[RMDB]
RNA sequence: GGGAACGACUCGAGUAGAGUCGAAAAGCUCGAAGAAAUCAGCGGGAUUCCUGGAGCAAUUUUCUGCCAUAAGGGAUUGUUUUUAUCCGUUUGGGAUAGCAAAGAACACUGUCGGCGAGCCUUACAGUCUUCAGUAGUGUUUCGACACUACUGAAGAAAAAGAAACAACAACAACAAC
Reactivity to DMS in 0.01 (KOAc 150mM, MgCl2 10mM, bicine 150mM(pH8.5), 24C), signal-to-noise 3, nucleotides 027 to 126: g020c010u000c010g010a070a060g010a040a100a060u010c020a070g030c070g020g000g020a110u010u000c020c000u010g010g000a140g020c020a030a040u000u030u000u010c140u010g030c040c060a090u010a250a070g000g010g000a060u000u000g010u000u010u010u010u000a020u020c020c000g020u000u010u020g010g000g020a030u000a030g020c160a030a050a140g020a080a120c030a060c030u000g000u000c070g000g000c020g000a040g020c030c050u000u000a090c170a110g000
Reactivity to 2A3 in 0.01 (KOAc 150mM, MgCl2 10mM, bicine 150mM(pH8.5), 24C), signal-to-noise 2, nucleotides 027 to 126: g080c010u040c030g060a080a060g020a010a190a100u210c020a010g100c040g070g000g050a040u000u050c030c000u020g060g040a130g040c000a010a010u120u070u220u070c110u110g070c060c020a050u080a150a040g030g000g010a020u000u010g050u030u180u000u010u060a050u010c010c040g040u090u270u110g110g000g000a020u080a010g000c050a100a080a000g000a060a000c030a000c040u020g020u070c030g050g000c000g020a020g010c020c000u040u060a040c040a100g080

About this RNA
Structure probing data (DMS and 2A3) for a 177-nucleotide construct. Values cover nucleotides 27 to 126. It was measured as part of the RMDB library OK2TST. For DMS, 2,334 sequencing reads were counted. Conditions: 150 mM KOAc, 10 mM MgCl2 and 150 mM bicine (pH 8.5), 24 C.